[RMDB]
RNA sequence: GGGAACGACUCGAGUAGAGUCGAAAAGAUAUGGAGCGUUUGUGACAUGCUUUAAGGUCGGAAACGACCUGAAGAGCAACAGCACAUGCGCUCCUAAGUCAAACCCCCUUAGUUCGCUAAGGGGGAAGGUAAAGUCUACGUUCGCGUAGACUUUACCAAAAGAAACAACAACAACAAC
Reactivity to 2A3 in 0.01 (KOAc 150mM, MgCl2 10mM, bicine 150mM(pH8.5), 24C), signal-to-noise 2, nucleotides 027 to 126: g000a000u020a000u100g010g020a010g000c000g020u000u040u030g000u000g030a190c160a300u300g000c010u270u270u010a020a000g000g000u010c010g000g020a030a020a000c000g010a000c020c000u030g010a030a040g010a000g040c050a110a130c100a180g010c020a000c000a000u020g000c000g010c010u000c010c010u000a010a010g000u000c000a010a010a300c000c000c000c000c000u010u030a030g060u120u110c300g040c220u010a030a000g040g000g010g020g000a000a060
Reactivity to DMS in 0.01 (KOAc 150mM, MgCl2 10mM, bicine 150mM(pH8.5), 24C), signal-to-noise 2, nucleotides 027 to 126: g010a030u000a140u010g000g000a010g010c010g030u000u000u000g000u020g000a060c100a300u030g030c010u000u000u000a300a030g010g000u000c000g010g000a020a030a070c010g010a000c010c000u020g000a070a110g000a000g010c010a070a030c260a120g000c000a010c000a010u000g010c010g010c000u000c000c000u000a010a010g000u000c010a130a190a300c020c000c020c000c000u000u000a010g010u000u010c300g020c000u000a000a020g000g000g000g010g000a010a000
Overview
Source: RMDB library TTRDES, as collected in RNAgym. Structure probing data (2A3 and DMS) for a 177-nucleotide construct. For DMS the reverse transcriptase was MarathonRT. For 2A3, 3,986 sequencing reads were counted. The RNA was probed in 150 mM KOAc, 10 mM MgCl2 and 150 mM bicine (pH 8.5) at 24 C. The DMS profile rests on 2,390 reads.